[RMDB]
RNA sequence: GGGAACGACUCGAGUAGAGUCGAAAAGACGCCGGUUGAUGCUGUGAGUCGGGCACAAACCGCCCACCGCUACUCGUGACCUACGUGGCAGCUGGGGCACUAGUGGCUGCCGUUUGCGGUGCAGACGCUAGGCGGCCAUGUUCGCAUGGCCGCCUAGAAAAGAAACAACAACAACAAC
Reactivity to DMS in 0.01 (KOAc 150mM, MgCl2 10mM, bicine 150mM(pH8.5), 24C), signal-to-noise 1, nucleotides 027 to 126: g010a130c140g030c110c020g000g000u000u010g030a110u010g030c020u030g000u030g000a080g000u010c080g000g010g040c030a040c200a010a060a060c120c080g000c020c030c030a100c100c090g020c020u000a040c080u000c060g030u000g000a100c060c010u000a040c130g010u010g010g000c050a010g010c090u000g000g000g010g000c060a030c040u000a060g000u000g010g000c030u000g000c020c030g020u000u000u000g000c040g010g000u000g020c080a070g010a070c150g000